An RNA of 207 nucleotides, treated with DMS and 2A3 and read out base by base.
RNA sequence: GGGAACGACUCGAGUAGAGUCGAAAAUAUCAAGCACUACGCAAUAGGUCACGCCGUCCAAGCUACUGAUGGCUGUGUAAAUCCCCUCGGUUGUCCCGUUAGUGGCUGCCGACGUUGACAGCAUACGCAUACGAAGUGAGCCGUCAAUCUCGCGUGGCUCCAUGUAUGUUUUCGAACAUACAUGGAGAAAAGAAACAACAACAACAAC
Reactivity to DMS in 0.01 (KOAc 150mM, MgCl2 10mM, bicine 150mM(pH8.5), 24C), signal-to-noise 3, nucleotides 027 to 156: u000a090u010c060a090a110g010c020a100c040u000a110c100g010c040a110a100u010a120g010g020u010c030a040c040g020c010c030g030u000c020c030a050a090g000c040u010a040c020u000g010a050u000g010g010c020u000g060u010g000u000a050a060a140u010c020c030c020c070u000c070g010g000u010u000g000u000c040c010c060g020u000u010a070g040u000g020g030c000u000g010c080c010g000a030c060g000u000u000g010a030c000a050g000c030a140u010a050c040g030c050a100u000a170c090g000a120a120g020u010g030a160g030c000c010g000u010c020a040a040u010c110u000c020g020c020g020u000g020g000
Reactivity to 2A3 in 0.01 (KOAc 150mM, MgCl2 10mM, bicine 150mM(pH8.5), 24C), signal-to-noise 4, nucleotides 027 to 156: u220a030u080c070a070a010g050c050a010c070u080a010c100g010c080a060a100u060a140g020g090u060c020a010c030g010c000c000g020u020c010c030a050a040g060c060u150a070c050u110g020a030u040g050g000c090u090g010u030g030u150a060a090a140u080c030c000c000c000u000c010g000g020u020u000g070u130c000c010c010g080u040u110a050g010u070g080g000c000u000g000c000c010g000a030c050g030u000u040g060a020c010a020g000c040a050u140a170c040g000c050a060u080a200c090g070a120a040g020u030g070a020g010c020c000g030u010c020a020a060u040c080u030c110g020c020g010u010g020g000
Description
For DMS, 7,690 sequencing reads were counted. The reactions ran in a buffer of 150 mM KOAc, 10 mM MgCl2 and 150 mM bicine (pH 8.5), at 24 C. It was measured as part of the RMDB library OK3TST.